[RMDB]
RNA sequence: GGGAACGACUCGAGUAGAGUCGAAAAGAUUCUAUGUUCGCAUAGAAUCAAAGAACGCCGAAGCGCAGAGCGCAAGAUGGAGGAGACGGCGAACCACCAUAAAAACAGCGGUCUUCGGACCGCUGAAUCUAUUUCAAGUCUUCGGACUUGAAAUAGAAAAAGAAACAACAACAACAAC
Reactivity to DMS in 0.01 (KOAc 150mM, MgCl2 10mM, bicine 150mM(pH8.5), 24C), signal-to-noise 1, nucleotides 027 to 126: g000a000u000u000c000u000a000u010g000u000u010c190g040c010a010u000a000g020a020a020u000c000a060a090a100g020a060a130c050g010c000c000g020a140a130g020c000g000c070a120g030a130g000c030g030c010a110a080g020a120u020g000g000a080g010g000a090g010a250c040g000g010c070g010a060a170c060c020a120c080c040a100u000a020a070a030a070a140c000a010g010c030g010g000u000c000u000u010c170g020g010a010c000c010g000c000u000g000a050a040
Structure probing data (DMS) for a 177-nucleotide construct.
Reactivities are given for positions 27 through 126.
For DMS the reverse transcriptase was MarathonRT.
The reactions ran in a buffer of 150 mM KOAc, 10 mM MgCl2 and 150 mM bicine (pH 8.5), at 24 C.